[RMDB]
RNA sequence: GGGAACGACUCGAGUAGAGUCGAAAAGAUAUGGACCAUCACGCUAGCACAUUCGGAAACGAAUGUUACAGCUUGGACCGUGAAUGGUCCUAAGUCAAAGGAGCCACACGUUCGCGUGUGGCUCCAAUCCAACUCAUAUCUUCGGAUAUGAGUUGGAAAAAGAAACAACAACAACAAC
Reactivity to DMS in 0.01 (KOAc 150mM, MgCl2 10mM, bicine 150mM(pH8.5), 24C), signal-to-noise 2, nucleotides 027 to 126: g000a030u010a160u000g010g010a030c000c010a020u000c000a010c010g010c080u000a020g020c040a140c000a010u000u000c000g000g000a030a020a120c010g000a010a000u000g000u000u000a120c200a140g010c020u000u010g020g000a130c170c020g010u020g000a030a040u000g000g000u000c000c010u000a020a100g000u000c040a100a120a090g010g000a010g000c000c000a020c000a000c020g030u000u010c220g020c000g000u030g010u000g010g010c000u000c020c020a010a040
Reactivity to 2A3 in 0.01 (KOAc 150mM, MgCl2 10mM, bicine 150mM(pH8.5), 24C), signal-to-noise 2, nucleotides 027 to 126: g000a000u040a020u060g000g020a000c000c000a010u010c000a000c030g100c280u200a010g010c030a020c000a010u000u030c000g000g050a010a050a000c020g020a030a000u010g020u040u240a150c110a030g050c020u060u080g300g140a120c040c060g010u000g030a100a120u020g020g000u010c000c000u010a020a000g020u000c040a080a150a090g040g000a010g000c000c000a000c000a000c010g150u210u240c300g030c040g100u000g000u010g020g000c000u020c000c000a030a000